An RNA of 177 nucleotides, treated with DMS and read out base by base.

RNA sequence: GGGAACGACUCGAGUAGAGUCGAAAACAGCAACCAAAAGCCGUGAGGCGUGGUCAGCCAGGGCUCACCCCACUCACCCCCACCUGGGAGCACCACAUCCCCACGGCAGGGCCCCGCAGUGCCGGUGGCCGUACCACUGUUUCGACAGUGGUACGGCAAAAGAAACAACAACAACAAC
Reactivity to DMS in 0.01 (KOAc 150mM, MgCl2 10mM, bicine 150mM(pH8.5), 24C), signal-to-noise 2, nucleotides 027 to 126: c150a080g010c050a090a130c030c050a110a100a210a200g030c000c000g030u000g000a060g010g000c300g000u000g000g000u010c000a300g020c000c030a060g020g000g020c050u030c090a240c000c000c000c000a040c090u040c080a300c070c010c000c000c010a160c010c030u000g010g020g020a150g010c160a000c000c020a020c020a080u010c000c000c000c030a050c010g020g030c050a050g000g010g010c000c020c030c000g000c040a160g010u000g000c040c060g060g000u040g010
The RNA was probed in 150 mM KOAc, 10 mM MgCl2 and 150 mM bicine (pH 8.5) at 24 C.